[RMDB]
RNA sequence: GGGAACGACUCGAGUAGAGUCGAAAAUGAUGCGCCCGAGCGUGAGCAGCGCCGAGGCCAUCGUCGCGCCCGAAUGCCCCAUGCUGACGGCGGCGGCGGCGCGGCCUUCCUUGACCAGCCGGGUGCAGUCAUGGAGCAGGUUCGCCUGCUCCAUGACAAAAGAAACAACAACAACAAC
Reactivity to DMS in 0.01 (KOAc 150mM, MgCl2 10mM, bicine 150mM(pH8.5), 24C), signal-to-noise 2, nucleotides 027 to 126: u000g030a080u000g000c000g000c010c000c000g000a200g000c010g070u060g000a090g050c150a030g010c100g020c090c080g010a050g030g000c030c030a030u020c020g070u030c020g000c090g000c080c000c050g050a100a110u020g010c020c010c120c080a120u030g050c050u070g010a260c150g000g000c040g000g050c050g030g040c020g000g000c100g010c050g040g000c010c020u000u010c220c040u000u010g020a120c220c070a190g000c000c000g010g000g020u010g010c040a000
Reactivity to 2A3 in 0.01 (KOAc 150mM, MgCl2 10mM, bicine 150mM(pH8.5), 24C), signal-to-noise 3, nucleotides 027 to 126: u170g040a010u070g000c000g000c010c000c000g020a120g050c040g150u090g090a050g030c010a000g020c010g050c140c050g010a030g110g000c010c000a030u020c010g000u010c010g000c010g010c020c010c000g060a090a060u150g020c040c000c040c050a090u300g010c010u080g000a030c020g020g030c030g050g020c000g040g000c010g000g000c090g010c030g030g000c000c000u060u020c010c000u110u100g100a210c040c000a000g020c000c000g000g000g000u000g010c000a000

The data come from the RNA Mapping Database (RMDB), library OK1LIB. The record gives the reactivity of an RNA of 177 nucleotides to DMS and 2A3. The 2A3 profile rests on 3,028 reads. For DMS the reverse transcriptase was MarathonRT.